[RMDB]
RNA sequence: GGGAACGACUCGAGUAGAGUCGAAAAAAGUGUUGAGAGCAGCACCAGGCCUACAGUAAUGUCUUUGGUAGUAACUCUUAUCCCGAUUAUAAAAAUAUAUUUGUUAGCUGGAUAUGGUCGCUCACACCUGUAAUCCCAGAACUGUGGGAGGCCAAGAGUUUUAUGAUUAGUUCGCUAAUCAUAAAACAAAAGAAACAACAACAACAAC
Reactivity to 2A3 in 0.01 (KOAc 150mM, MgCl2 10mM, bicine 150mM(pH8.5), 24C), signal-to-noise 1, nucleotides 027 to 156: a000a000g180u140g010u070u130g010a060g000a020g030c120a020g000c000a020c010c000a030g010g000c000c000u040a030c090a080g080u270a090a180u170g010u070c050u110u150u080g080g000u010a160g000u040a130a150c000u010c000u090u090a060u110c000c000c000g000a020u120u110a060u270a200a020a040a040a000u100a050u040a110u120u130u080g000u000u010a080g010c030u030g040g040a060u080a110u210g000g000u040c000g010c050u000c000a000c000a010c030c000u010g020u110a120a160u070c030c000c030a010g020a100a050c050u050g020u010g030g030g000a000g000g000c020c000a030a060g050a000

Structure probing data (2A3) for a 207-nucleotide construct. The reactions ran in a buffer of 150 mM KOAc, 10 mM MgCl2 and 150 mM bicine (pH 8.5), at 24 C. For 2A3, 442 sequencing reads were counted. 2A3 adducts were read by reverse transcription with SuperScript II with manganese. Values are in units of 0.01, from 0 to 300, in steps of 10.